Structure probing data (DMS and 2A3) for a 207-nucleotide construct.
2A3 adducts were read by reverse transcription with SuperScript II with manganese.
It was measured as part of the RMDB library OK3TST.
Values cover nucleotides 27 to 156.
RNA sequence: GGGAACGACUCGAGUAGAGUCGAAAAGAGUAAGGGCUUGAACUUUCACUUUCAUAAUCAUGAGUUCUAUAUCAGACGUACGCUUGUUUUUAUUAUGAAUCAACUUAAGAUAUUGUCCUUUGAGCUUACACUGGACAAAAUUCAGUGGUUUUAGUGGGUAUGUGGUCUUAUUCGUAAGACCACAUACAAAAGAAACAACAACAACAAC
Reactivity to DMS in 0.01 (KOAc 150mM, MgCl2 10mM, bicine 150mM(pH8.5), 24C), signal-to-noise 2, nucleotides 027 to 156: g010a170g000u000a110a100g030g020g060c020u000u010g010a100a070c030u000u000u000c080a100c040u000u000u000c040a040u000a050a050u000c160a180u010g010a030g010u000u000c050u000a070u000a090u020c050a090g030a070c120g000u000a040c060g050c030u010u030g000u000u000u000u000u020a060u030u000a060u030g010a020a050u000c020a060a110c050u010u000a010a090g020a120u000a040u000u000g030u000c020c000u020u010u000g020a110g030c150u000u010a080c020a020c010u000g020g020a070c020a000a000a040a300u000u000c060a020g010u010g010g010u000u000u030u000a070g010u000g070g010
Reactivity to 2A3 in 0.01 (KOAc 150mM, MgCl2 10mM, bicine 150mM(pH8.5), 24C), signal-to-noise 4, nucleotides 027 to 156: g060a000g040u140a030a060g030g040g000c040u070u060g060a060a040c020u090u140u040c070a070c080u100u160u100c050a100u090a180a080u070c060a060u060g030a040g030u090u010c080u110a100u020a050u170c030a030g050a120c050g060u060a030c060g060c080u020u060g020u060u110u070u040u050a110u080u050a070u110g070a000a000u030c030a030a090c030u050u070a050a010g040a090u080a120u170u010g000u000c000c000u000u020u040g030a020g000c010u020u020a040c010a020c030u000g000g000a000c010a030a040a020a030u020u010c010a010g000u020g000g130u040u040u020u080a080g020u110g100g070